RNA sequence: GGGAACGACUCGAGUAGAGUCGAAAAUCCUAAGUCAAGGCGAAACACAAGAGGUAGGCCGAGCGUCGGAAACGACGCGUUUGACGCCUACUACCCACCUUGUGUAGUAGCCUUGAUAUGGAAAAGAUCAUAAGUAUCUUCGGAUACUUAUGAUCAACUUAUUAAGGUUGUUCGCAACCUUAAUAAGAAAAGAAACAACAACAACAAC
Reactivity to 2A3 in 0.01 (KOAc 150mM, MgCl2 10mM, bicine 150mM(pH8.5), 24C), signal-to-noise 4, nucleotides 027 to 156: u010c000c000u030a110a010g020u000c000a000a000g000g000c010g030a020a010a010c010a000c000a000a000g010a010g010g010u000a000g000g000c020c020g010a010g000c000g000u000c010g030g070a080a090a050c020g010a000c010g010c000g010u040u050u140g020a020c020g000c000c000u020a010c000u020a010c020c050c010a080c000c010u000u000g000u000g000u000a010g010u000a000g010c000c000u000u000g000a000u000a020u030g030g010a020a070a090a130g000a000u010c000a010u000a010a000g000u000a000u000c010u040u110c280g070g000a000u000a000c000u000u000a000u000g000a000u000c000a000a000
Reactivity to DMS in 0.01 (KOAc 150mM, MgCl2 10mM, bicine 150mM(pH8.5), 24C), signal-to-noise 4, nucleotides 027 to 156: u010c010c010u010a070a290g020u000c000a030a030g020g020c000g000a300a300a240c010a020c010a020a000g010a110g030g010u000a010g010g030c020c010g010a120g020c010g010u010c010g000g000a170a170a300c010g020a020c000g020c000g020u000u000u020g030a160c220g010c020c010u000a020c010u000a000c020c010c030a300c180c010u000u020g020u000g010u000a080g010u000a300g000c000c000u000u010g000a010u000a140u010g010g000a040a090a130a130g030a010u000c000a010u000a000a000g020u000a000u010c010u000u000c300g020g010a040u010a010c000u000u010a000u000g010a010u000c000a010a040
Source information:
This 207-nucleotide RNA was probed chemically with 2A3 and DMS. For 2A3, 9,949 sequencing reads were counted. The DMS profile rests on 9,410 reads.